This 177-nucleotide RNA was probed chemically with DMS.
Reactivities are given for positions 27 through 126.
Source: RMDB library OK2TRN, as collected in RNAgym.
Conditions: 150 mM KOAc, 10 mM MgCl2 and 150 mM bicine (pH 8.5), 24 C.
For DMS, 735 sequencing reads were counted.
DMS (dimethyl sulfate) methylates the pairing face of unpaired adenines and cytosines.
[RMDB]
RNA sequence: GGGAACGACUCGAGUAGAGUCGAAAAGCGGCGCGCCCUGUGCCCGGCACCGCCGCCCGUUUGUCGGCAACGCCGCCGCGACCCGUGAGCCGUCCAGCAGCUGGCGCCUGCGAAACGUGUGGAAGCGCCCAUACCGCAGUUUCGACUGCGGUAUGGGAAAAGAAACAACAACAACAAC
Reactivity to DMS in 0.01 (KOAc 150mM, MgCl2 10mM, bicine 150mM(pH8.5), 24C), signal-to-noise 1, nucleotides 027 to 126: g010c020g000g020c100g000c150g000c020c080c140u010g000u000g000c110c060c000g000g010c030a040c300c080g000c090c090g000c110c030c050g060u030u010u010g030u030c080g020g000c050a090a160c130g040c030c010g060c000c020g040c030g000a100c000c040c010g000u020g040a060g010c030c010g000u000c030c020a210g030c000a030g010c060u030g000g000c030g010c120c030u000g010c050g010a110a110a060c030g000u000g040u010g030g020a070a130g000c160g010